[RMDB]
Notes
Chemical mapping of a 177-nucleotide RNA with DMS and 2A3. The reactions ran in a buffer of 150 mM KOAc, 10 mM MgCl2 and 150 mM bicine (pH 8.5), at 24 C. For DMS, 9,052 sequencing reads were counted.
RNA sequence: GGGAACGACUCGAGUAGAGUCGAAAAGAGGGACCAACGUCAACAUCUCGUGCAUCAUCCGGGGAGAGCCGGUGCCUUCCGUGAUGUGGAAGAAAGCGGAUGGCCACACCAUCCACAACAGCGAGCAAGGUGAAGGAAUUUUCGAAUUCCUUCACCUAAAAGAAACAACAACAACAAC
Reactivity to DMS in 0.01 (KOAc 150mM, MgCl2 10mM, bicine 150mM(pH8.5), 24C), signal-to-noise 5, nucleotides 027 to 126: g020a090g000g000g010a100c050c020a080a100c110g010u010c050a070a100c120a070u010c010u000c010g000u010g010c040a080u000c060a070u030c060c030g020g000g000g010a090g000a120g000c010c070g010g000u020g000c120c040u000u000c020c020g000u030g000a090u040g020u020g000g010a070a080g000a080a130a140g020c050g010g000a010u000g000g000c030c100a060c200a200c010c000a020u000c000c000a060c080a100a050c120a070g000c050g010a110g000c150a130
Reactivity to 2A3 in 0.01 (KOAc 150mM, MgCl2 10mM, bicine 150mM(pH8.5), 24C), signal-to-noise 7, nucleotides 027 to 126: g120a030g010g030g010a020c020c030a040a050c060g080u060c050a050a030c010a130u020c020u030c030g070u100g020c020a070u030c000a020u020c060c010g020g000g030g020a170g010a020g050c020c020g040g020u070g040c010c010u040u030c010c010g040u080g060a130u120g050u120g040g040a040a050g040a070a100a010g070c030g030g000a020u020g020g000c060c000a040c000a000c000c000a020u020c010c010a040c030a100a040c020a030g060c000g040a010g030c050a080